[RMDB]
RNA sequence: GGGAACGACUCGAGUAGAGUCGAAAAGACCUCCGCGACUCGCAAAACAAGGAGAGGUCUCAAAAGCUAGUGGCUCCUAGCUGCUGCUCGUGCAGUGAGUGCGACAUCACCAAAUUGCGGGAAAUCCCUAAAGCUUUGACUACCAAGUGCGGCGCCGGGAUACGUAUAGGUUCGCCUAUACGUAUCCAAAAGAAACAACAACAACAAC
Reactivity to 2A3 in 0.01 (KOAc 150mM, MgCl2 10mM, bicine 150mM(pH8.5), 24C), signal-to-noise 5, nucleotides 027 to 156: g030a030c010c010u000c000c030g030c030g100a080c040u080c080g050c050a030a090a050a060c070a150a040g070g010a090g000a010g030g010u010c000u000c040a100a110a010a010g020c010u040a020g020u050g130g010c000u010c040c010u030a040g000c010u000g010c000u010g010c010u050c120g140u220g010c000a020g010u030g090a070g030u070g040c020g020a030c020a070u090c020a030c040c000a020a050a130u080u070g010c000g000g020g020a070a080a070u090c020c000c000u090a080a100a030g000c010u090u050u090g030a050c010u050a050c030c020a090a030g020u010g040c030g040g000c020g010c020c040g050
Reactivity to DMS in 0.01 (KOAc 150mM, MgCl2 10mM, bicine 150mM(pH8.5), 24C), signal-to-noise 2, nucleotides 027 to 156: g020a060c000c000u000c000c010g030c070g020a150c010u000c010g010c000a060a090a110a300c100a120a180g010g000a110g000a050g010g020u000c000u020c080a100a040a050a050g000c010u000a060g050u010g000g000c040u000c050c030u000a080g030c010u000g000c020u000g000c070u010c080g030u000g040c010a040g000u020g000a130g010u000g010c040g000a060c040a060u010c030a150c040c000a040a140a170u000u000g000c030g110g010g000a040a100a110u000c020c000c030u000a110a090a060g000c020u000u000u010g000a100c080u000a110c040c020a050a100g010u000g030c040g030g000c070g030c110c040g010